[RMDB]
RNA sequence: GGGAACGACUCGAGUAGAGUCGAAAACGAGAUGAGUUCGCUCAUCUCGAAAGAACCGCGGGCCUGACUCGGUCAGAGCAUGACAGGCGCUGCGGUCACGAAAAAGUGGUGUGUUCGCACACCACAACAUUUGCGUUACGUUCGCGUAACGCAAAUGAAAAGAAACAACAACAACAAC
Reactivity to 2A3 in 0.01 (KOAc 150mM, MgCl2 10mM, bicine 150mM(pH8.5), 24C), signal-to-noise 1, nucleotides 027 to 126: c010g000a010g000a000u010g000a010g050u050u090c150g060c060u020c000a000u000c010u010c000g010a000a000a010g040a030a010c010c000g030c000g000g000g030c020c000u020g010a100c020u020c040g040g170u200c230a070g030a030g060c100a070u170g080a050c000a000g000g010c160g020c190u000g000c010g000g000u000c010a050c020g160a130a050a010a030a000g020u010g010g000u000g000u000g000u030u050c140g000c030a000c000a000c000c000a000c000a000a000
Reactivity to DMS in 0.01 (KOAc 150mM, MgCl2 10mM, bicine 150mM(pH8.5), 24C), signal-to-noise 3, nucleotides 027 to 126: c010g000a000g010a020u020g000a010g030u010u020c240g020c010u000c010a010u010c000u000c000g010a030a070a100g000a130a030c000c010g010c030g010g000g010c000c000u010g000a190c030u000c030g030g000u000c300a100g000a040g010c210a110u020g020a150c020a000g000g000c030g010c000u000g000c000g000g000u000c040a030c140g000a080a060a030a100a080g030u000g010g000u010g020u000g000u020u010c230g020c000a010c000a000c000c000a000c010a050a060